[RMDB]
Background: Chemical mapping of a 177-nucleotide RNA with 2A3 and DMS. The data come from the RNA Mapping Database (RMDB), library OK1LIB. Reactivities are rounded to 0.1 and cut off at 0 and 3.

RNA sequence: GGGAACGACUCGAGUAGAGUCGAAAAGAACGCCAAGAGGCGAGACCGAGACCGAGAAUCACGCUAACUCGGAAAAGUGGCAUAGCGUCAGGAGUCCACUGUCGGAAAAGCCGAAAGAACGGCAGAAACUAAUGCCACGGUUCGCCGUGGCAUUAGUAAAAGAAACAACAACAACAAC
Reactivity to 2A3 in 0.01 (KOAc 150mM, MgCl2 10mM, bicine 150mM(pH8.5), 24C), signal-to-noise 1, nucleotides 027 to 126: g030a000a000c130g050c030c020a080a020g080a220g040g000c030g000a020g080a010c000c000g000a010g030a040c000c000g010a000g010a020a020u070c040a050c010g000c010u040a120a020c000u000c020g000g000a030a040a040a030g010u020g000g020c060a020u080a200g000c030g090u010c030a060g000g130a060g050u040c000c000a060c000u020g000u020c000g010g040a070a060a040a000g000c000c030g000a060a100a000g140a060a000c030g020g040c000a010g030a030a060
Reactivity to DMS in 0.01 (KOAc 150mM, MgCl2 10mM, bicine 150mM(pH8.5), 24C), signal-to-noise 2, nucleotides 027 to 126: g000a160a060c250g000c000c030a200a110g000a290g000g040c030g000a030g000a300c010c000g000a040g030a150c000c000g000a020g000a040a040u010c050a040c050g000c010u030a250a160c010u000c000g040g030a060a050a100a110g000u000g010g000c110a020u000a030g000c010g010u040c120a060g000g000a050g030u000c020c000a030c000u020g000u000c000g000g000a050a080a190a120g000c030c000g020a130a130a160g000a090a080c030g030g040c000a130g010a010a060